RNA sequence: GGGAACGACUCGAGUAGAGUCGAAAAGAUAUGGAUGAUUGGGAGAAUGCCAUCGGAAACGAUGGAAAUUCGAAGAACAAUAUCCUAAGUCGGUAGCAUUACCUAACGUUCGCGUUAGGUAAUGCAAACUAAACGCUCUGUUCGCAGAGCGUUUAGUAAAAGAAACAACAACAACAAC
Reactivity to DMS in 0.01 (KOAc 150mM, MgCl2 10mM, bicine 150mM(pH8.5), 24C), signal-to-noise 3, nucleotides 027 to 126: g000a000u000a100u020g000g000a000u000g020a040u010u000g010g010g000a050g010a010a010u000g020c000c000a010u000c000g030g010a030a030a020c000g010a010u000g000g000a020a060a040u000u000c000g010a110a170g010a110a250c040a010a020u000a120u000c000c000u000a010a150g000u000c000g010g000u000a120g000c010a000u000u000a000c000c000u000a010a010c000g020u000u020c230g020c020g000u000u000a000g010g000u010a000a000u000g010c000a020a020
Reactivity to 2A3 in 0.01 (KOAc 150mM, MgCl2 10mM, bicine 150mM(pH8.5), 24C), signal-to-noise 2, nucleotides 027 to 126: g000a000u040a010u070g030g010a040u300g060a010u290u010g020g000g010a010g030a000a010u030g030c010c000a000u000c010g000g000a010a020a020c000g000a000u010g000g050a040a170a020u010u030c000g070a210a050g000a000a020c000a000a000u000a010u010c000c000u000a030a020g050u000c020g060g150u180a030g000c000a000u010u010a010c000c000u000a000a010c000g040u080u120c300g000c020g110u020u010a000g000g000u000a000a000u000g000c000a010a000